[RMDB]
RNA sequence: GGGAACGACUCGAGUAGAGUCGAAAAGGGGUCGGACCCGUUUGACGACGAAGACAUGCUCUGUGGACUGAAGCCUCCACGGUCCAUCUGAGAGCAACAGCUUCGUCCGAGGGUCCGACGGAGGCACCCAAAACAGCGUCGAUUCGUCGACGCUGAAGUUAUGUCAGUAGUUCGCUACUGACAUAACAAAAGAAACAACAACAACAAC
Reactivity to DMS in 0.01 (KOAc 150mM, MgCl2 10mM, bicine 150mM(pH8.5), 24C), signal-to-noise 3, nucleotides 027 to 156: g060g010g030g000u000c010g030g000a080c000c000c000g020u010u000u000g010a130c110g000a040c000g000a010a030g000a070c090a210u010g000c030u000c020u000g040u000g030g000a110c020u010g000a070a070g010c040c010u000c040c030a300c050g000g000u000c000c010a030u000c090u010g020a060g020a080g040c020a060a070c090a120g000c010u000u000c000g010u000c000c000g010a300g010g020g020u010c000c000g020a010c010g030g000a030g030g040c020a060c010c010c010a050a060a120a270c000a020g000c000g020u000c000g020a090u000u000c300g010u000c000g000a020c010g030c000u000g010a020a060
Reactivity to 2A3 in 0.01 (KOAc 150mM, MgCl2 10mM, bicine 150mM(pH8.5), 24C), signal-to-noise 8, nucleotides 027 to 156: g100g000g030g000u010c010g000g000a000c010c020c010g010u210u150u250g100a020c010g000a000c000g000a000a000g020a050c120a230u300g000c000u000c010u020g010u010g000g000a000c000u010g000a070a010g010c000c000u010c000c000a020c020g000g010u010c010c010a090u070c190u290g170a050g010a010g050c030a090a060c040a060g000c000u010u000c000g000u000c010c010g020a150g000g000g000u000c000c000g000a000c000g000g000a000g000g000c010a040c000c000c000a040a090a010a050c010a000g000c000g000u000c000g010a010u040u110c160g050u010c010g150a000c000g000c000u000g000a010a000
Structure probing data (DMS and 2A3) for a 207-nucleotide construct. The reactions ran in a buffer of 150 mM KOAc, 10 mM MgCl2 and 150 mM bicine (pH 8.5), at 24 C. For 2A3 the reverse transcriptase was SuperScript II with manganese. For 2A3, 14,579 sequencing reads were counted.